[RMDB]
RNA sequence: GGGAACGACUCGAGUAGAGUCGAAAAAUGAUCGCGCCGUCCGGCGCAGCACCCAUCACCCAGGGGGUGGUUACCCACAAAAACACGCGAUCAACCUCCAGUCCGGGCUAUGCCCAGCCUAUGCAAAAUCAAACACAACUUUCGAGUUGUGUUUGAUAAAAGAAACAACAACAACAAC
Reactivity to 2A3 in 0.01 (KOAc 150mM, MgCl2 10mM, bicine 150mM(pH8.5), 24C), signal-to-noise 1, nucleotides 027 to 126: a000u100g000a020u040c000g030c000g000c010c090g100u130c060c140g030g000c030g010c000a000g040c000a050c010c030c000a030u130c000a040c030c030c060a070g050g000g010g000g050u000g040g010u040u120a070c060c000c000a030c040a050a170a030a000a020c040a010c020g010c000g050a020u010c020a030a080c000c010u000c000c030a030g060u070c070c000g010g040g030c030u100a080u190g030c000c000c030a000g030c000c000u080a070u170g000c070a080a110a070
Reactivity to DMS in 0.01 (KOAc 150mM, MgCl2 10mM, bicine 150mM(pH8.5), 24C), signal-to-noise 3, nucleotides 027 to 126: a130u010g010a050u010c050g010c000g070c050c070g030u010c130c130g000g020c090g040c070a050g000c080a060c030c020c020a090u010c050a110c020c050c050a120g010g010g010g020g030u000g020g010u000u010a130c060c020c020a090c180a060a050a080a080a030c090a100c060g000c030g010a050u010c030a050a180c080c010u000c030c020a140g030u000c060c090g000g000g030c030u000a070u030g000c010c030c010a120g010c020c040u000a080u020g010c170a050a050a090